[RMDB]
RNA sequence: GGGAACGACUCGAGUAGAGUCGAAAAGUCGCCGCGUCUACAUCAACGCCCAGCGCGGGCGAGGGAGGCGUCCUACGGGGGUGACCCAUUCGCCGGCAUGGUAGAGGACCGCAAGAUUGCCUCGACGGAUCCGGUAAUCGUUCGCGAUUACCGGAUCAAAAGAAACAACAACAACAAC
Reactivity to 2A3 in 0.01 (KOAc 150mM, MgCl2 10mM, bicine 150mM(pH8.5), 24C), signal-to-noise 1, nucleotides 027 to 126: g030u030c000g000c060c000g010c030g010u040c030u040a130c040a190u100c040a120a030c040g000c000c040c000a070g080c200g040c100g070g000g010c000g020a030g020g040g020a080g000g040c000g030u010c000c000u040a130c130g120g000g000g020g030u080g090a130c000c000c000a050u040u060c010g000c040c000g040g000c060a050u030g010g030u040a020g030a030g010g000a050c020c020g040c060a060a070g020a090u120u250g000c000c010u000c000g020a030c040g070
Reactivity to DMS in 0.01 (KOAc 150mM, MgCl2 10mM, bicine 150mM(pH8.5), 24C), signal-to-noise 3, nucleotides 027 to 126: g020u010c020g000c040c000g000c040g020u020c030u000a070c100a120u010c110a080a080c070g020c040c020c020a170g010c180g050c060g030g010g010c020g000a030g010g000g000a090g010g000c000g000u000c010c010u000a070c200g030g010g010g020g030u010g000a180c070c020c030a210u010u000c030g030c010c010g000g000c070a070u000g010g010u000a110g010a050g000g000a090c060c080g020c160a090a080g000a070u000u000g010c010c020u000c010g000a130c200g010